[RMDB]
RNA sequence: GGGAACGACUCGAGUAGAGUCGAAAAGGGACGCCUUUAGAAGAAGAGGCUAGGUGGUAUUCCGGUGUGGGAUACUUGAUAAUAUGUAACGCUAAUUGCAUAAGAUUGUAGGACGGAAUUUACAGUCAAAACGGUCCUGCGUUCGCGCAGGACCGAACUAAUAGGUAAGGUUCGCCUUACCUAUUAGAAAAGAAACAACAACAACAAC
Reactivity to 2A3 in 0.01 (KOAc 150mM, MgCl2 10mM, bicine 150mM(pH8.5), 24C), signal-to-noise 6, nucleotides 027 to 156: g020g010g010a020c060g010c010c020u060u060u080a200g040a260a010g020a040a030g010a030g030g000c040u040a040g060g030u060g010g000u030a040u040u020c030c030g060g070u180g040u150g080g000g000a010u020a060c020u030u070g050a020u070a220a050u080a050u080g030u030a000a030c050g020c130u060a080a050u070u050g010c020a010u010a090a070g020a050u040u080g030u030a010g000g070a030c070g030g020a040a010u090u070u070a070c020a030g020u040c040a030a030a060a070c030g000g000u000c000c000u010g000c000g020u020u050c220g010c000g000c020a000g000g030a000c000c000g000a000a000
Reactivity to DMS in 0.01 (KOAc 150mM, MgCl2 10mM, bicine 150mM(pH8.5), 24C), signal-to-noise 2, nucleotides 027 to 156: g000g010g010a090c130g000c010c010u010u000u010a100g010a160a180g010a140a080g000a030g000g010c020u000a040g030g020u000g010g000u000a060u000u000c010c010g000g020u000g010u010g050g000g000a050u000a020c030u000u000g000a100u010a100a110u000a100u020g000u010a050a080c060g030c100u000a070a130u000u000g010c010a070u010a080a110g000a080u000u010g000u010a040g010g000a170c070g020g010a070a230u000u000u000a040c030a070g030u000c050a040a070a070a140c040g040g000u000c000c000u000g030c000g040u000u010c300g010c060g000c000a020g020g000a000c020c000g000a000a030

This 207-nucleotide RNA was probed chemically with 2A3 and DMS. The reactions ran in a buffer of 150 mM KOAc, 10 mM MgCl2 and 150 mM bicine (pH 8.5), at 24 C. Values cover nucleotides 27 to 156. The DMS profile rests on 5,062 reads. For DMS the reverse transcriptase was MarathonRT. In probing experiments dimethyl sulfate is read out at A N1 and C N3, which are open when not base-paired.